[RMDB]
RNA sequence: GGGAACGACUCGAGUAGAGUCGAAAAAACAACAUAACUCUAACAAAUAUUAUACGCAAUAGUGUUUCAAUAACUAACAGCAGGAAAAGACGAGAUUUGAAUGGUGAGUUUGAAUUUUCCACUUCCAAGGAAUUAGAUUGUCUUUACAAAUCAUAUGGAUGAUAGGUCUAUUCGUAGACCUAUCAUCAAAAGAAACAACAACAACAAC
Reactivity to 2A3 in 0.01 (KOAc 150mM, MgCl2 10mM, bicine 150mM(pH8.5), 24C), signal-to-noise 2, nucleotides 027 to 156: a010a000c110a090a020c060a070u180a110a030c030u100c020u130a020a020c040a040a080a020u160a130u260u260a160u120a110c080g020c050a030a120u050a100g060u010g050u000u080u030c100a080a030u020a120a000c020u110a070a030c050a060g080c010a000g030g130a010a010a010a000g060a000c010g050a040g000a130u110u060u000g090a060a050u070g010g000u040g000a030g000u060u060u000g030a010a010u030u000u070u020c010c010a030c010u090u000c020c010a030a060g040g000a010a010u010u000a060g060a090u000u070g000u030c000u010u120u040a110c080a050a090a060u070c020a060u060a010u220g070
Reactivity to DMS in 0.01 (KOAc 150mM, MgCl2 10mM, bicine 150mM(pH8.5), 24C), signal-to-noise 1, nucleotides 027 to 156: a100a050c040a060a050c060a170u000a040a070c040u000c040u010a130a190c030a090a060a070u010a040u010u000a110u000a130c060g010c040a100a120u010a090g000u000g000u000u000u000c060a040a110u000a060a090c080u030a080a040c000a090g020c050a130g010g000a060a030a030a080g000a170c090g020a070g040a070u010u000u000g000a050a100u030g000g040u000g010a210g000u020u000u000g000a110a030u000u000u000u000c010c010a090c110u010u000c040c040a070a170g020g040a030a070u000u000a050g000a090u000u000g000u010c040u000u010u010a070c050a020a070a140u010c090a080u020a140u010g000
Overview:
This 207-nucleotide RNA was probed chemically with 2A3 and DMS. The data come from the RNA Mapping Database (RMDB), library OK3TST. Values cover nucleotides 27 to 156. The reactions ran in a buffer of 150 mM KOAc, 10 mM MgCl2 and 150 mM bicine (pH 8.5), at 24 C.